Chemical mapping of a 207-nucleotide RNA with 2A3. The reactions ran in a buffer of 150 mM KOAc, 10 mM MgCl2 and 150 mM bicine (pH 8.5), at 24 C.

RNA sequence: GGGAACGACUCGAGUAGAGUCGAAAACAAGGAACUUGCCAAGGGCGUAGGUGCUGUCGUAACCCUCCUUCUGGGAAUGGCUGUAGCAGCUCGCAUCAUGUCUACACAGACUGGUGUGUUGGUUCGGACGGGUAUCUCGAUGAUCCUUCUCGCCACCCCUAGGAAUGCGUUUCGACGCAUUCCUAGGAAAAGAAACAACAACAACAAC
Reactivity to 2A3 in 0.01 (KOAc 150mM, MgCl2 10mM, bicine 150mM(pH8.5), 24C), signal-to-noise 2, nucleotides 027 to 156: c040a000a030g070g030a040a020c070u100u100g150c090c030a080a080g140g010g030c030g110u210a040g000g040u030g000c000u020g020u050c030g050u070a060a080c020c000c000u100c000c010u100u090c020u020g080g050g100a150a180u150g060g000c000u020g020u230a070g040c070a010g010c010u030c030g000c000a000u010c000a010u290g000u000c000u060a150c110a020c050a190g000a040c000u000g000g000u000g000u010g040u120u190g000g020u100u100c080g000g020a030c060g120g020g030u100a100u120c120u010c060g060a040u070g010a030u030c000c000u000u100c040u010c030g040c010c010a130c000c020